[RMDB]
RNA sequence: GGGAACGACUCGAGUAGAGUCGAAAACGAACCAGGCCGAGGUCCUCCUGCACACCGGACACAUCACACACAUGGGCAGAAGCUACGCUUUAGACCUGGCCCAACAAAGCCCGGAGGGGUGCCUGUCGGUUCUCGAUAACCUGUCUCUCUAUAUGUCGUUAACAUUACGCUUCGGCGUAAUGUUAACAAAAGAAACAACAACAACAAC
Reactivity to 2A3 in 0.01 (KOAc 150mM, MgCl2 10mM, bicine 150mM(pH8.5), 24C), signal-to-noise 2, nucleotides 027 to 156: c070g030a010a000c030c020a090g010g040c020c010g080a020g010g020u050c000c040u080c000c000u050g080c120a020c010a060c090c030g050g030a000c040a000c010a120u300c070a060c020a010c000a000c000a260u080g000g000g030c000a030g030a150a070g000c040u090a110c120g100c130u160u200u120a040g020a070c020c000u060g060g000c010c010c000a040a030c040a070a030a010g000c020c040c040g050g000a030g020g070g000g000u000g030c000c020u060g050u070c010g040g000u040u020c020u010c020g040a040u010a110a050c020c000u050g040u010c010u020c040u000c040u070a060u060a090u300g160u160c050